[RMDB]
RNA sequence: GGGAACGACUCGAGUAGAGUCGAAAAGAAAGAAAGAAAAGGCCAAAGAAGCGCACGAAAAGAAAAGAAAAACGUGCGCGUUGGAAUGCGCGACCGACAAGAAAGGCCAAGAAAUCGUGCAUGAAAACACCCGUAAUAGUUUCGACUAUUACGGGUGAAAAGAAACAACAACAACAAC
Reactivity to DMS in 0.01 (KOAc 150mM, MgCl2 10mM, bicine 150mM(pH8.5), 24C), signal-to-noise 2, nucleotides 027 to 126: g000a100a090a080g000a150a070a130g010a100a070a050a090g000g000c010c010a020a100a090g010a150a190g000c020g000c040a010c000g010a070a070a120a100g020a110a130a130a130g000a110a050a040a170a090c000g010u000g000c000g000c000g000u000u010g000g000a080a030u000g000c020g020c000g000a040c010c060g030a060c090a050a100g020a080a050a100g000g000c010c020a050a080g000a040a090a110u000c000g000u000g020c000a010u000g030a090a110a040a160
Reactivity to 2A3 in 0.01 (KOAc 150mM, MgCl2 10mM, bicine 150mM(pH8.5), 24C), signal-to-noise 2, nucleotides 027 to 126: g170a030a030a000g120a090a060a000g090a030a150a020a020g030g000c020c030a050a120a070g100a090a010g070c010g000c020a000c040g050a030a030a070a040g100a140a090a070a050g190a010a100a000a040a010c000g020u000g000c020g000c000g000u000u010g000g020a000a080u040g000c000g000c000g030a010c000c020g050a000c000a030a050g110a170a050a000g050g000c000c010a030a040g030a050a100a000u020c010g000u000g030c010a010u070g090a000a040a040a000
The record gives the reactivity of an RNA of 177 nucleotides to DMS and 2A3.
For 2A3, 1,667 sequencing reads were counted.
For DMS, 3,085 sequencing reads were counted.
2A3 adducts were read by reverse transcription with SuperScript II with manganese.
Source: RMDB library OK1LIB, as collected in RNAgym.